[RMDB]
Chemical mapping of a 177-nucleotide RNA with 2A3 and DMS. High DMS reactivity at an A or C suggests that its Watson-Crick edge is free. For 2A3, 421 sequencing reads were counted. The RNA was probed in 150 mM KOAc, 10 mM MgCl2 and 150 mM bicine (pH 8.5) at 24 C.

RNA sequence: GGGAACGACUCGAGUAGAGUCGAAAAGGAGGCCGGACCUGAUCCGGCAGCAAUCUCGCACUUGCACAAAUCCAUAUUGCACUGCAAUAUGGACUGGGCGGGAAUGCGAGCUGGGUUCGAAAUGUACUGGGAGAUUAACGUUCGCGUUAAUCUCCCAAAAAGAAACAACAACAACAAC
Reactivity to 2A3 in 0.01 (KOAc 150mM, MgCl2 10mM, bicine 150mM(pH8.5), 24C), signal-to-noise 1, nucleotides 027 to 126: g050g030a050g030g010c000c000g020g000a070c000c000u300g080a250u080c010c000g000g000c000a000g090c000a000a020u010c000u000c000g000c000a080c010u100u120g070c060a000c050a210a000a000u000c000c000a000u000a010u000u000g000c020a120c300u130g000c000a000a040u000a000u000g000g000a000c000u000g000g000g020c090g000g000g030a000a110u050g000c010g040a020g030c010u080g070g000g110u030u130c080g040a130a070a090u210g010u090a020c110
Reactivity to DMS in 0.01 (KOAc 150mM, MgCl2 10mM, bicine 150mM(pH8.5), 24C), signal-to-noise 1, nucleotides 027 to 126: g000g000a090g000g000c070c070g000g050a000c000c050u010g030a190u010c060c000g000g000c010a030g040c050a090a170u000c010u000c000g010c000a060c010u010u030g030c030a070c000a000a120a300u000c000c000a000u000a010u060u000g020c000a110c120u100g010c000a010a040u000a000u000g000g040a000c110u000g000g000g030c020g060g000g000a050a050u000g030c010g000a090g040c190u050g020g000g030u000u010c080g010a170a060a100u050g010u040a220c140